[RMDB]
RNA sequence: GGGAACGACUCGAGUAGAGUCGAAAAAUCCCCGCGUGGGGAUCAGCUCGCAGCACAACGGCGCUGACCUGAUCGGGUUCGAGGACGUUCACGCCGUCGAGGCCGGCACGGUCACGUCGGCCGGCUGGUAUGACUGAGCGUUCGCGCUCAGUCAUACAAAAGAAACAACAACAACAAC
Reactivity to DMS in 0.01 (KOAc 150mM, MgCl2 10mM, bicine 150mM(pH8.5), 24C), signal-to-noise 1, nucleotides 027 to 126: a070u000c000c000c000c020g030c220g010u000g000g010g000g010a030u000c040a050g030c030u010c120g010c000a060g050c070a090c110a120a250c080g010g000c020g000c190u000g010a010c030c000u000g000a140u000c020g020g000g000u000u010c000g000a010g000g020a000c010g000u000u000c220a140c060g030c010c010g000u000c000g010a040g000g000c010c000g000g010c100a040c160g010g000u010c030a090c100g020u010c000g040g040c190c050g030g000c020u000g000